[RMDB]
RNA sequence: GGGAACGACUCGAGUAGAGUCGAAAACCUCACUACAUUUUACUGGUCCUAAAGAAUUUGUGACAGGUACAGUAAAACGUAUUGCAAGGUUUAUCAGUUCCUAUAAACAGGUAAAUAACAAUAUAUGAAAAGCAAAGACUGUUCGCAGUCUUUGCAACAUGUCUAACACGUUCGCGUGUUAGACAUGAAAAGAAACAACAACAACAAC
Reactivity to 2A3 in 0.01 (KOAc 150mM, MgCl2 10mM, bicine 150mM(pH8.5), 24C), signal-to-noise 7, nucleotides 027 to 156: c000c000u010c010a000c010u000a000c000a030u010u010u010u000a000c000u000g030g060u080c010c010u090a090a130a070g130a230a240u210u250u230g170u100g090a090c090a080g000g010u070a100c000a000g000u000a000a000a000a000c000g000u000a000u010u030g030c080a080a040g020g000u010u000u030a140u100c040a020g000u000u010c010c000u030a070u160a090a110a010c060a010g070g060u070a060a090a140u190a110a060c040a120a060u080a020u060a050u250g090a100a070a020a030g000c000a000a000a000g000a000c000u010g010u040u070c160g000c080a000g000u000c000u000u000u010g000c000a000a000
Reactivity to DMS in 0.01 (KOAc 150mM, MgCl2 10mM, bicine 150mM(pH8.5), 24C), signal-to-noise 2, nucleotides 027 to 156: c000c010u000c030a040c050u010a010c000a020u000u000u010u000a010c000u020g010g010u000c010c020u010a110a110a230g010a100a220u010u010u010g000u010g030a240c180a040g010g020u000a170c020a030g010u010a010a010a010a030c030g020u010a010u000u000g020c030a110a020g030g080u000u010u000a070u010c060a130g020u000u010c020c030u000a140u010a050a130a160c110a070g010g000u010a040a080a100u000a070a170c100a050a100u000a150u020a120u020g000a050a060a120a200g000c010a030a010a020g020a020c010u000g030u010u020c220g070c010a010g040u000c010u000u000u000g030c000a040a020
The record gives the reactivity of an RNA of 207 nucleotides to 2A3 and DMS. For 2A3, 4,380 sequencing reads were counted. For DMS the reverse transcriptase was MarathonRT. The reactions ran in a buffer of 150 mM KOAc, 10 mM MgCl2 and 150 mM bicine (pH 8.5), at 24 C. 2A3 adducts were read by reverse transcription with SuperScript II with manganese.